This 207-nucleotide RNA was probed chemically with 2A3 and DMS. The DMS profile rests on 8,349 reads. Source: RMDB library OK3TST, as collected in RNAgym.
RNA sequence: GGGAACGACUCGAGUAGAGUCGAAAAUAAAAAGGUUCAGGGCAAUUUUAAGAAAUAUGCACGACAGUAUGAUGAACAUGCUAUUGUUCAAGAACAAGAAAAUUGUUCUAUUGCGGUUGGUCGUUCACCGGAUGGUUUUCGUCAAUUAACUUAUGUGAACAGCAUAGUAAUUCGUUACUAUGCUGUUAAAAGAAACAACAACAACAAC
Reactivity to 2A3 in 0.01 (KOAc 150mM, MgCl2 10mM, bicine 150mM(pH8.5), 24C), signal-to-noise 3, nucleotides 027 to 156: u070a020a030a050a010a000g040g000u040u100c040a000g020g020g000c000a000a040u090u050u060u120a100a010g030a020a110a020u190a070u160g020c040a040c080g090a010c030a030g060u080a060u080g080a080u080g020a080a010c020a000u000g080c030u100a040u150u040g030u030u060c030a020a030g010a020a000c010a020a000g080a120a140a050a050u010u010g000u010u000c010u040a080u010u160g080c040g060g000u040u060g050g000u010c030g000u000u030c040a030c080c000g050g030a040u040g000g040u030u010u000u080c020g030u040c020a080a100u060u050a060a060c030u110u040a060u140g080u020g000
Reactivity to DMS in 0.01 (KOAc 150mM, MgCl2 10mM, bicine 150mM(pH8.5), 24C), signal-to-noise 3, nucleotides 027 to 156: u030a040a120a100a140a080g010g000u000u010c050a040g020g000g040c040a040a030u010u030u010u000a060a160g020a150a060a110u010a090u010g020c120a100c000g020a060c040a050g020u000a050u020g000a160u020g020a070a160c020a060u000g030c050u000a070u000u000g020u010u000c050a090a080g000a050a050c030a040a070g010a100a070a050a130u000u010g010u000u000c010u000a150u000u000g020c030g030g030u000u010g000g000u000c040g000u000u000c000a080c010c020g010g000a090u000g000g010u000u010u000u010c030g000u000c040a040a090u000u000a050a060c100u000u000a090u000g020u010g010